[RMDB]
RNA sequence: GGGAACGACUCGAGUAGAGUCGAAAAGGAAAUAGGUAUGCGGUCCCUAUUAAAAUAUUGCGACAAACUGGCACACAGCAAGCGAGUGGUGACGAGUGCACACAAGUCGUUCCCAGCCAGAAAAAAACGGUAUACAGUAGUUCGCUACUGUAUACCGAAAAGAAACAACAACAACAAC
Reactivity to 2A3 in 0.01 (KOAc 150mM, MgCl2 10mM, bicine 150mM(pH8.5), 24C), signal-to-noise 1, nucleotides 027 to 126: g110g020a020a040a060u070a110g020g000u080a020u170g050c020g000g040u040c040c010c000u040a050u000u150a000a030a030a060u190a070u080u170g060c010g010a030c070a030a150a000c050u010g050g000c020a020c000a010c000a060g040c030a030a050g030c040g100a080g080u070g010g020u010g040a010c050g020a030g080u210g030c020a020c020a000c020a050a040g000u020c000g030u020u020c000c010c000a010g020c000c010a010g070a080a120a000a030a020a020a030
Reactivity to DMS in 0.01 (KOAc 150mM, MgCl2 10mM, bicine 150mM(pH8.5), 24C), signal-to-noise 1, nucleotides 027 to 126: g000g000a080a040a050u000a010g000g000u000a070u000g010c030g000g020u000c070c000c020u000a060u000u040a090a080a100a070u010a100u000u000g000c000g000a070c140a040a200a060c060u000g010g010c060a080c140a090c070a050g000c010a050a100g030c120g030a060g000u000g000g000u000g000a090c080g000a110g020u000g000c100a000c060a060c080a030a060g000u000c000g010u000u000c010c000c000a160g050c120c100a050g000a010a000a030a030a090a060a060
Structure probing data (2A3 and DMS) for a 177-nucleotide construct. The RNA was probed in 150 mM KOAc, 10 mM MgCl2 and 150 mM bicine (pH 8.5) at 24 C. DMS adducts were read by reverse transcription with MarathonRT. For 2A3, 1,136 sequencing reads were counted.